[RMDB]
Structure probing data (DMS and 2A3) for a 177-nucleotide construct. For 2A3 the reverse transcriptase was SuperScript II with manganese. It was measured as part of the RMDB library RFM100. Reactivities are rounded to 0.1 and cut off at 0 and 3.
RNA sequence: GGGAACGACUCGAGUAGAGUCGAAAAUUGCUCAGGCAGCGUAACGCUGCUUGAAAGACCACAUGAAAGUCCUGGCGGGUUAAGCGCCGCCAGGCGGGGUUCGGAGGCGCCUGGCAACAGAAGCCUCGGAACGGUAUGCUUUCGAGCAUACCGUUCCAAAAGAAACAACAACAACAAC
Reactivity to DMS in 0.01 (KOAc 150mM, MgCl2 10mM, bicine 150mM(pH8.5), 24C), signal-to-noise 1, nucleotides 027 to 126: u120u000g060c230u000c000a000g010g000c060a010g000c000g000u050a140a150c250g000c000u000g000c030u000u000g000a020a100a160g000a160c000c020a070c300a120u040g040a000a030a160g000u000c000c000u000g010g000c000g000g010g000u020u000a090a140g060c300g000c000c040g050c040c040a040g070g000c000g000g000g000g000u030u070c020g100g010a000g000g000c060g000c100c000u030g070g000c000a120a300c060a040g000a030a040g010c000c000u000c000
Reactivity to 2A3 in 0.01 (KOAc 150mM, MgCl2 10mM, bicine 150mM(pH8.5), 24C), signal-to-noise 5, nucleotides 027 to 126: u080u150g030c000u010c020a000g010g000c010a000g000c000g060u120a130a060c250g000c010u000g000c000u000u000g000a000a000a000g070a040c010c020a020c010a150u280g180a180a020a000g300u010c010c000u000g000g000c000g090g000g000u100u160a110a080g060c110g070c080c000g000c000c000a000g000g010c000g000g000g000g010u080u300c080g040g000a000g000g000c000g010c000c000u040g260g000c000a010a000c000a010g000a000a000g000c000c000u000c000